[RMDB]
RNA sequence: GGGAACGACUCGAGUAGAGUCGAAAAGAUAUGGACUGAUCAUGGAGAUGGGAUCAUGAACUACCAAACCGUUUCGGAAACGAAACGGCUUGGCAUGAGUCCCAUCUCCAUGAUCAGUCCUAAGUCACAAAUAUAUCUCCUUCGGGAGAUAUAUUUGAAAAGAAACAACAACAACAAC
Reactivity to DMS in 0.01 (KOAc 150mM, MgCl2 10mM, bicine 150mM(pH8.5), 24C), signal-to-noise 2, nucleotides 027 to 126: g000a020u000a300u000g000g010a030c000u000g010a000u000c000a000u000g000g010a030g020a030u000g010g000g010a300u000c000a010u000g010a060a070c140u010a300c030c000a000a010a020c000c000g010u000u000u000c000g000g000a140a080a270c000g000a000a000a010c020g000g030c020u000u000g000g000c020a000u000g000a080g000u010c000c000c000a010u000c010u000c000c000a000u000g000a000u000c000a010g010u000c000c000u010a000a090g010u000c050a210